Structure probing data (2A3) for a 177-nucleotide construct.
Source: RMDB library 15KREP, as collected in RNAgym.
2A3 adducts were read by reverse transcription with SuperScript II with manganese.
The RNA was probed in 150 mM KOAc, 10 mM MgCl2 and 150 mM bicine (pH 8.5) at 24 C.
[RMDB]
RNA sequence: GGGAACGACUCGAGUAGAGUCGAAAAAAAGAAGACGGCGAUGUGUUGUUGGCUGAGUUUGACACUUAUGACCCUAUUUAUAAGAAUGGUGCCAUGUAUAAAGGCAAACCAAUUCUUUGGGUCAAUACUGUUCUAUGUACUUCGGUACAUAGAACAGAAAAGAAACAACAACAACAAC
Reactivity to 2A3 in 0.01 (KOAc 150mM, MgCl2 10mM, bicine 150mM(pH8.5), 24C), signal-to-noise 1, nucleotides 027 to 126: a000a000a000g070a030a010g090a010c000g030g030c040g040a070u030g070u020g010u070u000g030u060u040g050g080c090u010g010a030g010u030u080u080g060a040c030a000c040u080u050a080u140g000a010c010c000c000u040a120u020u220u000a260u030a040a010g010a000a000u000g010g010u000g000c000c010a070u140g080u040a140u090a130a110a000g000g000c000a180a040a000c040c000a040a130u010u000c010u010u050u000g010g010g000u000c000a000a010u020a040